[RMDB]
RNA sequence: GGGAACGACUCGAGUAGAGUCGAAAAUAAGGAUACAUAUCCUCCUGUUUUUUAUGAUUUUAUUGAGAAAAAGCAACUUACUAUUCAAGAGAUACGACUACUUCUCGAUGCUUUAGAACAGGCUAGCCGAUACAGGACCAUUCGUGGUCCUGUAUCGAAAAGAAACAACAACAACAAC
Reactivity to DMS in 0.01 (KOAc 150mM, MgCl2 10mM, bicine 150mM(pH8.5), 24C), signal-to-noise 3, nucleotides 027 to 126: u000a040a070g010g010a050u000a150c150a230u000a140u000c030c000u000c020c000u000g000u000u000u000u000u000u000a050u020g000a080u000u000u010u030a080u000u000g010a040g020a020a030a100a210a050g000c020a090a140c050u000u000a050c100u000a110u000u000c140a080a090g030a060g010a090u010a040c100g010a160c060u000a090c250u000u000c010u000c000g000a000u000g000c070u000u020u000a010g010a000a000c010a020g000g000c240u000a060g000c170
Reactivity to 2A3 in 0.01 (KOAc 150mM, MgCl2 10mM, bicine 150mM(pH8.5), 24C), signal-to-noise 3, nucleotides 027 to 126: u110a010a010g030g010a010u070a150c060a100u300a080u080c010c000u010c000c000u000g000u000u050u000u020u010u070a120u110g030a060u000u100u130u300a040u040u100g020a020g000a000a060a000a020a000g000c040a020a030c030u070u060a070c040u140a150u210u230c110a180a030g030a010g010a070u070a170c060g110a100c080u050a020c040u030u020c020u010c030g000a010u010g020c010u020u030u040a030g000a020a000c010a000g010g010c050u040a030g080c010
Chemical mapping of a 177-nucleotide RNA with DMS and 2A3. The RNA was probed in 150 mM KOAc, 10 mM MgCl2 and 150 mM bicine (pH 8.5) at 24 C. It was measured as part of the RMDB library OK2TRN. DMS adducts were read by reverse transcription with MarathonRT. The DMS profile rests on 1,767 reads.